[RMDB]
RNA sequence: GGGAACGACUCGAGUAGAGUCGAAAAGUGGUGCGCGGAGAGGGUAACCACCGGCGCGCGUCACUGAUAUAUCCACCGGGGGGUAAGGGGAGAAAAGGAUACAGCGCGACGAAGUUAACACGCUGCCGAAAUGUACCCACAUUCGUGUGGGUACAAAACGUUAGUACAGUUUCGACUGUACUAACGUAAAAGAAACAACAACAACAAC
Reactivity to DMS in 0.01 (KOAc 150mM, MgCl2 10mM, bicine 150mM(pH8.5), 24C), signal-to-noise 2, nucleotides 027 to 156: g020u000g020g000u010g030c010g020c010g000g010a190g010a120g020g020g000u010a080a130c120c060a140c010c010g000g000c000g030c020g020c020g030u000c010a040c000u010g010a110u000a110u010a130u000c050c030a120c050c040g000g000g000g000g040g030u000a070a040g020g000g000g000a120g010a080a070a100a110g000g010a150u010a070c080a020g010c020g020c000g020a160c050g020a090a140g030u000u000a110a080c070a040c000g000c000u000g010c010c060g000a030a080a160u000g020u000a010c010c000c000a010c000a100u000u010c280g020u000g000u010g000g000g000u020a000c010a040a020a050
Reactivity to 2A3 in 0.01 (KOAc 150mM, MgCl2 10mM, bicine 150mM(pH8.5), 24C), signal-to-noise 2, nucleotides 027 to 156: g000u000g000g000u010g000c020g000c020g030g120a100g050a100g160g060g000u080a090a090c030c010a040c050c010g080g020c000g000c000g000c010g000u010c000a000c000u010g000a000u010a030u030a050u100c020c040a080c060c060g000g000g000g030g000g010u050a070a000g010g000g000g040a030g030a010a120a060a030g000g000a020u040a110c010a010g000c000g030c040g050a070c080g050a090a010g010u060u070a110a000c000a020c120g030c010u030g030c030c000g080a130a110a020u090g000u000a000c000c030c000a000c000a000u050u060c220g020u030g000u010g000g000g000u000a000c020a000a000a000
An RNA of 207 nucleotides, treated with DMS and 2A3 and read out base by base. The DMS profile rests on 5,164 reads. For 2A3 the reverse transcriptase was SuperScript II with manganese. The RNA was probed in 150 mM KOAc, 10 mM MgCl2 and 150 mM bicine (pH 8.5) at 24 C. DMS adducts were read by reverse transcription with MarathonRT. Source: RMDB library M2RFPK, as collected in RNAgym.